Chemical mapping of a 177-nucleotide RNA with 2A3 and DMS. DMS adducts were read by reverse transcription with MarathonRT. The RNA was probed in 150 mM KOAc, 10 mM MgCl2 and 150 mM bicine (pH 8.5) at 24 C. Source: RMDB library RFM100, as collected in RNAgym.
RNA sequence: GGGAACGACUCGAGUAGAGUCGAAAAACGGACCUAUUACGAUAGGUCCGAGCACGCGGAACUUUCACGCAUUCAGUUGCAAGGGAGAGGGGGAUGGGCCCCCUCUGGUUGCGUCGUGCGGAAGGAACAAGUGCAGCUGAUUCGUCAGCUGCACUUGAAAAGAAACAACAACAACAAC
Reactivity to 2A3 in 0.01 (KOAc 150mM, MgCl2 10mM, bicine 150mM(pH8.5), 24C), signal-to-noise 5, nucleotides 027 to 126: a010c000g010g000a000c000c000u000a010u000u090a050c240g100a020u000a000g000g010u000c000c000g000a000g010c020a000c000g020c010g010g060a030a040c010u050u120u150c140a080c110g000c010a010u090u050c060a220g300u140u040g050c090a120a120g080g090g020a040g010a000g000g000g020g000g000a070u230g120g130g060c000c000c000c010c010u000c000u000g000g000u000u020g110c010g030u240c030g000u120g010c000g030g020a030a010g050g010a070a040
Reactivity to DMS in 0.01 (KOAc 150mM, MgCl2 10mM, bicine 150mM(pH8.5), 24C), signal-to-noise 3, nucleotides 027 to 126: a240c010g010g000a010c020c000u000a000u020u040a170c190g020a040u020a000g000g000u000c000c000g020a050g030c030a020c020g020c030g000g000a030a060c010u020u070u030c070a110c300g000c020a040u010u010c300a110g000u020u000g040c010a170a230g040g000g000a020g030a000g000g010g000g040g010a300u050g020g010g030c000c000c000c010c030u000c000u010g010g020u010u000g000c000g000u030c010g060u000g020c030g020g010a070a080g000g000a130a120